[RMDB]
RNA sequence: GGGAACGACUCGAGUAGAGUCGAAAACUCAGACUGUCUGUGAGAGUCAGUCACAGAGUGUGAGACACUCUGAGUCACACUCAGUGAGAGACACUCUCUGAGUGUCUGAGUCUCAGAGAGACAGAGAAUCUGCGUGUGAUUUCGAUCACACGCAGAUAAAAGAAACAACAACAACAAC
Reactivity to DMS in 0.01 (KOAc 150mM, MgCl2 10mM, bicine 150mM(pH8.5), 24C), signal-to-noise 2, nucleotides 027 to 126: c010u000c030a120g020a130c030u010g000u000c000u000g000u000g000a030g000a060g020u000c020a070g020u130c040a050c000a030g020a010g010u000g000u000g010a120g030a300c060a090c040u000c060u000g010a090g010u000c060a040c020a010c020u000c000a010g020u000g010a020g000a140g010a120c200a100c010u000c000u020c050u000g010a020g010u010g010u000c030u000g000a050g000u000c000u010c000a030g000a080g020a040g010a040c000a030g000a210g000a110
Reactivity to 2A3 in 0.01 (KOAc 150mM, MgCl2 10mM, bicine 150mM(pH8.5), 24C), signal-to-noise 2, nucleotides 027 to 126: c010u020c010a000g070a140c020u020g030u000c000u010g110u030g090a030g000a020g190u000c010a010g030u010c010a000c000a010g030a020g000u010g020u030g190a180g150a050c020a010c030u010c060u050g060a050g190u250c020a000c010a000c010u000c010a000g030u020g000a040g000a010g060a040c020a040c140u000c000u000c010u050g020a020g000u020g020u000c020u020g020a030g070u010c000u000c010a060g010a010g020a020g010a000c000a020g040a020g020a100
The record gives the reactivity of an RNA of 177 nucleotides to DMS and 2A3.
For 2A3, 1,933 sequencing reads were counted.
The RNA was probed in 150 mM KOAc, 10 mM MgCl2 and 150 mM bicine (pH 8.5) at 24 C.
For DMS, 1,413 sequencing reads were counted.